[RMDB]
RNA sequence: GGGAACGACUCGAGUAGAGUCGAAAAAGAGUAGGACGCUGCCAAGCAACUAAUGUUCCACAGUAGCUCAGUGGUAGAGCAAUCGGCUGUUAACCGAUCGGUCGUAGGUUCGAGUCCUACCUGUGGAAUAGCCCUUAAUCUUCGGAUUAAGGGCUAUAAAAGAAACAACAACAACAAC
Reactivity to DMS in 0.01 (KOAc 150mM, MgCl2 10mM, bicine 150mM(pH8.5), 24C), signal-to-noise 6, nucleotides 027 to 126: a070g000a140g010u000a050g010g000a160c180g010c020u010g000c040c050a130a080g010c040a100a130c080u010a070a070u010g000u000u000c000c000a010c000a030g000u000a130g000c010u000c010a160g010u010g010g010u010a010g000a010g020c010a300a010u000c000g000g020c040u010g010u000u010a120a210c010c000g000a010u010c150g000g020u020c010g000u000a020g010g000u000u000c020g010a300g000u000c000c000u000a010c010c000u010g010u000g000g000a060
Reactivity to 2A3 in 0.01 (KOAc 150mM, MgCl2 10mM, bicine 150mM(pH8.5), 24C), signal-to-noise 2, nucleotides 027 to 126: a000g110a000g020u050a030g000g020a030c100g000c020u040g040c020c020a040a010g010c000a000a080c000u120a090a130u200g030u040u030c000c000a000c000a000g010u010a010g000c000u010c020a030g000u060g120g280u100a000g010a000g000c000a000a010u010c000g030g000c090u180g120u300u230a050a030c030c010g000a000u030c040g050g050u140c000g020u010a000g000g000u010u010c010g010a000g000u000c000c000u010a000c000c010u000g000u000g000g040a010
The data come from the RNA Mapping Database (RMDB), library OK2TRN. An RNA of 177 nucleotides, treated with DMS and 2A3 and read out base by base. For 2A3 the reverse transcriptase was SuperScript II with manganese.